[RMDB]
RNA sequence: GGGAACGACUCGAGUAGAGUCGAAAAGAUAUGGACCUACCCUUCUUUUGACGCUCGAGUGUCGGAAACGACACGAGAGCGAUAAGAAGGUAGGUCCUAAGUCAAAAGAUGCACUUCGGUGCAUCAAGAGUUAAGAAAGGUUCGCCUUUCUUAACUCAAAAGAAACAACAACAACAAC
Reactivity to 2A3 in 0.01 (KOAc 150mM, MgCl2 10mM, bicine 150mM(pH8.5), 24C), signal-to-noise 6, nucleotides 027 to 126: g020a010u040a050u100g010g000a000c000c000u000a030c150c040c010u030u020c040u080u220u140u300g300a220c100g000c010u010c000g010a020g010u010g000u010c000g000g020a050a050a030c000g010a000c010a000c000g000a010g010a000g000c010g010a000u010a000a000g000a010a000g010g000u000a000g010g000u000c000c000u000a000a000g000u000c000a000a010a010a130g010a000u010g000c000a000c020u080u140c300g160g000u000g000c010a000u000c000a000a020
Reactivity to DMS in 0.01 (KOAc 150mM, MgCl2 10mM, bicine 150mM(pH8.5), 24C), signal-to-noise 6, nucleotides 027 to 126: g010a030u000a300u010g000g010a000c000c000u000a010c140c070c020u000u010c010u000u000u010u010g010a250c120g020c000u000c000g010a300g010u000g010u000c000g000g000a050a050a150c010g010a010c000a010c000g010a300g000a010g020c000g010a020u000a010a010g010a010a010g010g010u000a000g000g000u000c000c000u000a010a060g000u000c040a110a110a150a190g000a020u000g000c000a020c000u000u020c200g020g010u000g000c000a000u000c010a050a120
Source: RMDB library TTRDES, as collected in RNAgym. Structure probing data (2A3 and DMS) for a 177-nucleotide construct. Reactivities are given for positions 27 through 126. 2A3 adducts were read by reverse transcription with SuperScript II with manganese. The reactions ran in a buffer of 150 mM KOAc, 10 mM MgCl2 and 150 mM bicine (pH 8.5), at 24 C.